[RMDB]
RNA sequence: GGGAACGACUCGAGUAGAGUCGAAAAGACCCAAAUUUCUCGAUUUCUUUGGUUGUACAAAGUGGUAUGGCUCUCUUGCUCAUACCGCUUUACAGCUAAAGGAAUCGAUUGAUUUUGGAAACAUUUACACAGGACCAAUUUUCGAAUUGGUCCUGUGAAAAGAAACAACAACAACAAC
Reactivity to 2A3 in 0.01 (KOAc 150mM, MgCl2 10mM, bicine 150mM(pH8.5), 24C), signal-to-noise 2, nucleotides 027 to 126: g090a030c010c010c020a000a020a000u000u020u000c020u010c000g000a000u000u010u010c000u030u000u000g040g000u010u010g010u020a040c110a100a050a000g010u010g000g000u000a000u000g000g000c000u010c020u030c080u270u230g020c000u000c140a000u010a000c000c000g010c000u020u000u000a000c000a000g000c000u000a000a000a010g000g000a000a000u000c000g000a000u000u050g000a000u020u020u030u010g020g000a060a090a020c050a090u040u070u190a080
Reactivity to DMS in 0.01 (KOAc 150mM, MgCl2 10mM, bicine 150mM(pH8.5), 24C), signal-to-noise 2, nucleotides 027 to 126: g020a250c040c000c000a050a010a020u000u000u010c020u000c000g030a020u000u000u000c000u000u000u000g010g000u000u020g000u000a040c300a050a040a020g030u030g010g030u000a000u010g000g000c000u000c300u050c130u040u010g000c000u030c000a010u000a000c000c000g000c000u000u000u000a000c000a000g010c010u000a000a010a010g000g000a000a000u000c000g000a000u010u000g000a000u000u000u000u000g000g020a220a100a130c090a070u000u000u000a150
Conditions: 150 mM KOAc, 10 mM MgCl2 and 150 mM bicine (pH 8.5), 24 C. Chemical mapping of a 177-nucleotide RNA with 2A3 and DMS. 2A3 is a SHAPE reagent: it acylates the 2'-hydroxyl of flexible nucleotides of all four kinds. For DMS the reverse transcriptase was MarathonRT. Source: RMDB libraries RFM100 and RFMREP, as collected in RNAgym.